[RMDB]
RNA sequence: GGGAACGACUCGAGUAGAGUCGAAAAUUUGUGGAUGAAUUUUAUGGCUAUGAUAGAUCAGUGGGUGUCCAUGAUUAUAUAGAUGAAUCAAUUAAUAAAGUAGUAUAUGGAAGAGAGUCUCACGUAAGAUGGCGGGAUAUAUGGCAAGAACAUAAUGACGUAAUAUGUCAUUCGUGACAUAUUACGUAAAAGAAACAACAACAACAAC
Reactivity to 2A3 in 0.01 (KOAc 150mM, MgCl2 10mM, bicine 150mM(pH8.5), 24C), signal-to-noise 6, nucleotides 027 to 156: u070u040u090g020u030g020g040a040u020g040a060a130u060u070u060u060a070u070g030g000c010u020a020u110g030a100u080a090g070a050u040c040a030g030u040g010g030g000u030g020u010c010c020a020u040g020a020u120u060a060u040a040u060a090g070a050u070g060a040a040u050c040a030a040u100u230a070a100u150a130a120a000g010u040a010g040u020a090u020a050u200g050g000a060a010g030a020g020a020g050u000c020u030c030a060c030g020u030a040a030g010a050u050g020g000c040g000g010g000a010u020a000u020a010u070g020g000c040a040a040g050a100a010c030a060u160a140a070u170g020
Reactivity to DMS in 0.01 (KOAc 150mM, MgCl2 10mM, bicine 150mM(pH8.5), 24C), signal-to-noise 4, nucleotides 027 to 156: u000u000u000g030u000g010g020a140u000g020a080a070u010u010u010u020a070u020g020g010c010u000a060u010g020a150u010a050g020a060u000c050a070g010u000g020g010g030u000g010u000c030c030a070u000g000a100u000u000a100u000a300u000a150g010a150u000g000a080a100u000c020a050a160u010u000a080a120u010a050a060a170g020u000a090g010u000a070u000a080u010g010g010a050a110g000a130g000a080g020u010c030u000c050a070c090g020u000a040a110g020a070u010g020g030c070g020g000g000a070u000a070u000a070u010g010g020c020a030a080g020a050a050c080a110u000a050a180u000g010